Notes:
Source: RMDB library M2PK50, as collected in RNAgym. An RNA of 177 nucleotides, treated with DMS and 2A3 and read out base by base. The reactions ran in a buffer of 150 mM KOAc, 10 mM MgCl2 and 150 mM bicine (pH 8.5), at 24 C. The DMS profile rests on 1,840 reads. Reactivities are rounded to 0.1 and cut off at 0 and 3.
RNA sequence: GGGAACGACUCGAGUAGAGUCGAAAAGCAAAGGGGUUCGCCCCUUUGCAAAUAAACCGAUCAAAUAUAAGAAUAUAACGCGAAGAUGGGAAAAGAGCAAAAAAAGGUUCUACUUCGGUAGAACCAACUCUAAAUCCAAGUUCGCUUGGAUUUAGAGAAAAGAAACAACAACAACAAC
Reactivity to DMS in 0.01 (KOAc 150mM, MgCl2 10mM, bicine 150mM(pH8.5), 24C), signal-to-noise 2, nucleotides 027 to 126: g000c000a010a000a000g020g010g000g020u010u000c300g010c020c000c000c010u000u000u000g020c000a010a020a050u010a020a090a160c030c020g010a080u020c090a050a040a100u000a060u020a090a140g000a090a110u020a070u000a060a060c140g010c080g000a010a050g000a100u010g030g010g000a050a070a040a050g000a110g030c070a000a000a080a090a030a110a070g010g000u010u000c000u000a000c000u000u000c160g020g010u000a000g000a000a010c000c000a000a000
Reactivity to 2A3 in 0.01 (KOAc 150mM, MgCl2 10mM, bicine 150mM(pH8.5), 24C), signal-to-noise 3, nucleotides 027 to 126: g010c000a000a020a000g010g020g020g030u030u050c100g120c010c000c000c010u010u000u020g020c010a000a010a000u010a000a000a000c000c000g020a080u140c080a030a150a020u240a060u080a150a050g030a150a020u170a030u060a280a060c030g040c040g140a080a040g060a100u110g040g010g050a060a070a030a040g070a040g000c070a000a050a020a010a000a000a190g000g000u020u010c020u000a000c000u010u080c190g020g020u000a000g000a000a000c000c000a000a000